[RMDB]
RNA sequence: GGGAACGACUCGAGUAGAGUCGAAAACGCGUACGGAAACCAUCCCUGAUGAGCACCUACUCUUGGACUGAUACUAGUGGUAGAAUGCACCAAUCGUCUGAAUGCAUGCGAAAGGAUGGGGAACGUACGGAAACCAUCCGAAUCCGUACGGAAACCACCCUAUCGCCUGAUUCGUCAGGCGAUAGGGAAAAGAAACAACAACAACAAC
Reactivity to 2A3 in 0.01 (KOAc 150mM, MgCl2 10mM, bicine 150mM(pH8.5), 24C), signal-to-noise 2, nucleotides 027 to 156: c080g000c050g000u110a030c010g020g060a050a040a030c010c020a010u010c060c020c000u040g110a080u060g000a010g000c010a040c030c030u080a030c050u030c050u050u060g030g080a040c080u110g090a110u120a200c050u050a100g050u080g110g000u040a060g060a210a100u220g000c040a040c060c080a070a140u070c060g020u010c020u010g060a160a080u090g060c050a010u120g000c020g070a030a000a090g000g000a000u020g000g000g000g010a090a000c010g000u030a030c000g020g000a140a000a010c060c000a080u060c030c000g040a060a090u080c070c010g000u040a010c000g020g020a170a000a000c010c000a010